[RMDB]
RNA sequence: GGGAACGACUCGAGUAGAGUCGAAAAGGGGUCUUUGAGAAGGGAUUGCUCACAGAGAUGAGGUAUUUGGAAAUCAUAAUAAACUCGAGGGCCGGGCGUGGUGGCAGCACUAUGGGAGGCCAAGGCGCUAUUAGAAUCUCUUCGGAGAUUCUAAUAGAAAAGAAACAACAACAACAAC
Reactivity to 2A3 in 0.01 (KOAc 150mM, MgCl2 10mM, bicine 150mM(pH8.5), 24C), signal-to-noise 2, nucleotides 027 to 126: g000g010g000g010u020c020u060u120u070g090a050g030a010a030g050g000g030a040u050u180g020c020u010c020a060c040a050g180a030g030a240u090g010a020g020g030u050a120u090u140u100g040g040a050a090a050u130c030a020u040a160a020u060a030a220a060c010u010c010g010a060g030g010g050c080c000g020g010g010c010g040u030g020g010u040g050g000c030a030g060c000a030c040u070a070u070g020g000g050a060g010g000c010c010a000a010g030g000c040g000
Reactivity to DMS in 0.01 (KOAc 150mM, MgCl2 10mM, bicine 150mM(pH8.5), 24C), signal-to-noise 4, nucleotides 027 to 126: g020g000g010g010u000c030u000u000u000g000a080g010a120a110g010g000g000a090u000u000g010c040u010c040a080c090a150g010a110g010a110u000g010a040g010g010u000a060u000u000u010g010g000a110a100a090u000c040a040u000a080a090u000a070a130a110c030u000c030g000a120g000g000g020c010c070g020g010g020c070g030u000g000g010u000g010g020c120a050g000c070a040c090u010a080u000g010g000g010a110g010g000c040c030a030a070g000g000c090g000